This 177-nucleotide RNA was probed chemically with DMS and 2A3. It was measured as part of the RMDB library M2PK50. The DMS profile rests on 798 reads. 2A3 is a SHAPE reagent: it acylates the 2'-hydroxyl of flexible nucleotides of all four kinds. The reactions ran in a buffer of 150 mM KOAc, 10 mM MgCl2 and 150 mM bicine (pH 8.5), at 24 C. Reactivities are given for positions 27 through 126. For DMS the reverse transcriptase was MarathonRT.
[RMDB]
RNA sequence: GGGAACGACUCGAGUAGAGUCGAAAAGAUAGUUCGUUCGCGAACUAUCAAACGCGUCGGCGAAGCUAGCGAAUAGCUGAGAAAUCAGCCGAAUACAAACAAAAAGAACGGCCUUCGGGCCGUUCAACGCAUACUACAGGUUCGCCUGUAGUAUGCGAAAAGAAACAACAACAACAAC
Reactivity to DMS in 0.01 (KOAc 150mM, MgCl2 10mM, bicine 150mM(pH8.5), 24C), signal-to-noise 1, nucleotides 027 to 126: g000a000u000a030g010u000u000c010g000u000u020c300g020c000g020a020a000c000u000a000u000c000a020a160a050c100g030c170g020u000c040g000g020c000g020a180a100g020c010u010a010g000c200g000a090a100u000a060g000c000u000g000a080g000a090a110a080u000c060a150g020c010c000g040a100a060u010a070c130a080a070a080c140a030a040a060a140a060g010a030a020c000g020g000c000c000u000u000c160g040g000g010c000c000g000u020u000c000a080a080
Reactivity to 2A3 in 0.01 (KOAc 150mM, MgCl2 10mM, bicine 150mM(pH8.5), 24C), signal-to-noise 2, nucleotides 027 to 126: g000a000u000a000g000u010u010c000g010u040u060c210g000c000g160a000a000c010u000a000u000c000a000a000a000c090g050c040g120u040c020g010g010c010g020a080a010g010c010u050a020g010c030g210a300a250u080a130g030c040u010g010a020g070a090a110a070u080c020a020g000c000c010g040a040a000u200a050c090a020a190a010c040a020a130a030a030a060g000a000a000c000g010g010c000c020u050u120c160g060g000g000c000c030g020u000u020c000a000a000